[RMDB]
RNA sequence: GGGAACGACUCGAGUAGAGUCGAAAAGAUAUGGACGAUGAACUACUUCGGUAAAGCCAACAGCUCCUAUUAGUUCGGAAACGAACUAAUAGGAGACAUGGCUUUAAAUGAAGCAUCGUCCUAAGUCGAUAUACCUACCGUUCGCGGUAGGUAUAUCAAAAGAAACAACAACAACAAC
Reactivity to DMS in 0.01 (KOAc 150mM, MgCl2 10mM, bicine 150mM(pH8.5), 24C), signal-to-noise 4, nucleotides 027 to 126: g010a090u010a300u010g000g000a010c000g020a000u000g000a100a040c110u010a300c010u000u000c020g020g010u000a010a010a010g000c000c000a030a090c300a230g000c000u000c000c000u010a010u010u010a010g010u000u010c000g000g000a090a090a240c000g020a010a000c000u000a000a000u000a000g000g010a000g000a010c090a230u000g010g010c000u000u000u000a000a060a150u000g010a010a020g000c000a010u000c000g000u000c000c000u000a000a090g010u020c080
Reactivity to 2A3 in 0.01 (KOAc 150mM, MgCl2 10mM, bicine 150mM(pH8.5), 24C), signal-to-noise 3, nucleotides 027 to 126: g090a040u150a060u250g000g020a020c000g010a000u010g020a080a060c080u300a060c000u300u010c000g060g080u100a020a020a000g010c020c010a070a050c100a300g110c010u040c010c010u000a000u000u000a000g020u000u010c010g010g000a050a050a040c000g000a010a000c000u000a000a020u000a000g000g010a000g000a000c000a000u010g000g050c010u010u000u030a020a050a060u190g010a000a000g020c000a000u000c000g000u010c000c000u000a030a010g030u030c050
This 177-nucleotide RNA was probed chemically with DMS and 2A3. For DMS the reverse transcriptase was MarathonRT. For DMS, 4,508 sequencing reads were counted. The RNA was probed in 150 mM KOAc, 10 mM MgCl2 and 150 mM bicine (pH 8.5) at 24 C. 2A3 adducts were read by reverse transcription with SuperScript II with manganese. High 2A3 reactivity points to a flexible backbone, as in loops and unpaired stretches.